This 177-nucleotide RNA was probed chemically with DMS and 2A3. 2A3 adducts were read by reverse transcription with SuperScript II with manganese. It was measured as part of the RMDB library OK2TST. Conditions: 150 mM KOAc, 10 mM MgCl2 and 150 mM bicine (pH 8.5), 24 C. For DMS the reverse transcriptase was MarathonRT. For 2A3, 36,779 sequencing reads were counted.
RNA sequence: GGGAACGACUCGAGUAGAGUCGAAAAGGUAUGCGGCCGCGACCUCGCAGACCAAGGGGUUGAUAUUCGGCUGACCCCGCUGCCGCAAGCGUCGGGCUCAGUAUUCCGGAGUCGCGCAUCACCAUCGAUUACGAUAUAAUUUCGAUUAUAUCGUAAUAAAAGAAACAACAACAACAAC
Reactivity to DMS in 0.01 (KOAc 150mM, MgCl2 10mM, bicine 150mM(pH8.5), 24C), signal-to-noise 9, nucleotides 027 to 126: g010g010u000a030u000g010c020g010g010c080c090g020c110g000a020c010c010u000c020g010c120a110g010a130c190c150a120a130g010g000g000g010u000u000g010a100u010a150u000u000c050g010g000c020u000g000a030c170c000c000c010g010c040u000g010c020c060g010c240a130a230g000c030g010u000c030g010g000g010c150u000c010a020g010u010a160u010u010c040c010g010g000a040g010u000c060g010c030g010c040a040u000c130a060c020c020a130u010c120g000
Reactivity to 2A3 in 0.01 (KOAc 150mM, MgCl2 10mM, bicine 150mM(pH8.5), 24C), signal-to-noise 9, nucleotides 027 to 126: g020g000u040a010u040g010c010g040g050c060c070g050c050g030a010c000c000u000c010g060c120a080g090a170c050c050a090a080g020g000g000g000u010u020g040a060u040a170u170u070c020g030g000c010u010g010a010c000c000c000c010g000c020u020g010c010c040g080c110a040a010g010c000g040u050c010g010g010g000c020u000c010a010g020u050a300u210u070c010c000g010g010a020g030u070c040g010c000g000c050a020u040c060a010c020c000a060u120c040g070